[RMDB]
RNA sequence: GGGAACGACUCGAGUAGAGUCGAAAAAGGCGGUGAUGACAAAAAACAUUUCUCGAUGCUGAAACUUACUCGAGAGACCAAAUCACUCUUGUAAUCUUUCGUGAUGCUUGUUUUUAUGCGUGUCUGAGCCUAAAACUAGGGAGCUUCGGCUCCCUAGCAUCCAUAUAGCGUUCGCGCUAUAUGGAUGAAAAGAAACAACAACAACAAC
Reactivity to 2A3 in 0.01 (KOAc 150mM, MgCl2 10mM, bicine 150mM(pH8.5), 24C), signal-to-noise 7, nucleotides 027 to 156: a010g070g000c050g030g100u090g030a030u040g010a030c050a020a080a010a020a020a000c030a050u040u090u030c070u030c010g040a040u100g050c080u080g030a110a060a060c040u060u050a030c010u030c020g000a000g000a000g020a020c030c100a040a060a070u100c030a030c040u060c030u040u030g030u070a060a080u080c030u020u090u030c030g030u020g030a040u060g070c090u070u050g020u080u050u030u010u060a130u130g080c090g030u050g010u010c010u020g060a010g010c000c010u060a080a080a000a010c000u000a000g010g010g000a000g010c010u050u050c140g070g000c000u010c000c000c000u000a000g000
Reactivity to DMS in 0.01 (KOAc 150mM, MgCl2 10mM, bicine 150mM(pH8.5), 24C), signal-to-noise 4, nucleotides 027 to 156: a050g010g020c050g020g020u000g020a060u000g010a170c020a010a080a060a060a040a050c040a050u000u000u000c060u000c060g010a140u010g030c070u000g020a090a080a060c070u000u000a070c040u000c030g010a030g020a070g040a270c080c100a060a060a300u010c040a090c000u010c050u000u020g000u000a050a080u000c030u000u000u010c040g040u010g000a070u000g020c120u000u010g010u000u000u000u000u000a070u030g020c090g040u000g010u010c010u010g020a220g010c020c020u000a040a050a070a150c010u000a010g000g020g010a020g010c020u000u010c300g020g020c000u000c010c000c000u000a000g010